[RMDB]
RNA sequence: GGGAACGACUCGAGUAGAGUCGAAAAGCAAUAAUCGAGCAAUUAAACAAUGAUGAAGCACAAGAUUACUACAGCUUUCUUGAUUUGAUGGAAAAUACCGAUGAUGAUGACUUGAUAUGUGAAGAGAUGAGCACAUCAGAUUCGUCUGAUGUGCUCAAAAAGAAACAACAACAACAAC
Reactivity to DMS in 0.01 (KOAc 150mM, MgCl2 10mM, bicine 150mM(pH8.5), 24C), signal-to-noise 2, nucleotides 027 to 126: g000c080a050a120u010a150a040u010c030g040a120g000c110a120a090u010u000a100a040a160c150a060a010u000g000a160u000g000a070a090g010c050a090c130a140a070g000a120u000u040a080c160u000a080c300a070g000c000u000u000u000c040u000u000g010a200u010u010u010g020a040u000g000g040a020a020a120a050u010a070c040c020g000a020u010g010a110u000g010a100u010g010a090c090u000u000g010a010u000a060u000g000u000g040a080a090g000a160g010a130